[RMDB]
RNA sequence: GGGAACGACUCGAGUAGAGUCGAAAACGAGUGCAAUAAAGACGCGGUUGCCGAUCGGUAUGGAUGCCACCGUGACGGAUCAAUCACACAAGUGCCAACGAUAACGAGGCGCUCGCUAUUGCUGCGUAAAAGCGACGAUCGUUCGCGAUCGUCGCAAGUAUAUAGAUAGCUUCGGCUAUCUAUAUACAAAAGAAACAACAACAACAAC
Reactivity to 2A3 in 0.01 (KOAc 150mM, MgCl2 10mM, bicine 150mM(pH8.5), 24C), signal-to-noise 7, nucleotides 027 to 156: c040g010a030g070u100g010c030a040a070u050a130a190a030g100a040c040g010c030g050g040u080u120g020c010c030g050a060u030c020g030g060u140a120u120g090g060a070u120g070c030c010a010c010c050g010u020g030a030c040g020g000a050u150c050a060a040u050c010a060c010a000c020a140a040g010u020g050c030c000a070a060c070g050a060u070a180a040c060g010a070g030g000c010g000c030u030c030g000c000u030a020u060u110g010c060u080g010c000g020u050a030a070a050a060g000c000g000a000c000g000a000u010c010g010u060u050c170g010c000g080a000u000c000g000u010c000g000c000a000a000
Reactivity to DMS in 0.01 (KOAc 150mM, MgCl2 10mM, bicine 150mM(pH8.5), 24C), signal-to-noise 2, nucleotides 027 to 156: c040g000a070g020u000g000c030a190a100u000a060a130a120g020a060c060g020c010g020g000u000u010g020c050c010g030a120u000c020g030g000u000a100u020g030g020a120u000g020c020c020a080c020c090g010u010g000a130c060g010g000a120u000c110a080a180u000c020a100c040a110c070a080a110g040u010g000c020c000a040a120c070g010a110u000a040a080c050g010a150g020g000c010g030c000u000c030g010c030u000a060u000u000g020c000u000g010c000g010u000a040a060a100a150g040c010g000a020c010g000a020u000c000g050u000u000c230g030c060g020a040u000c000g000u000c000g020c000a000a010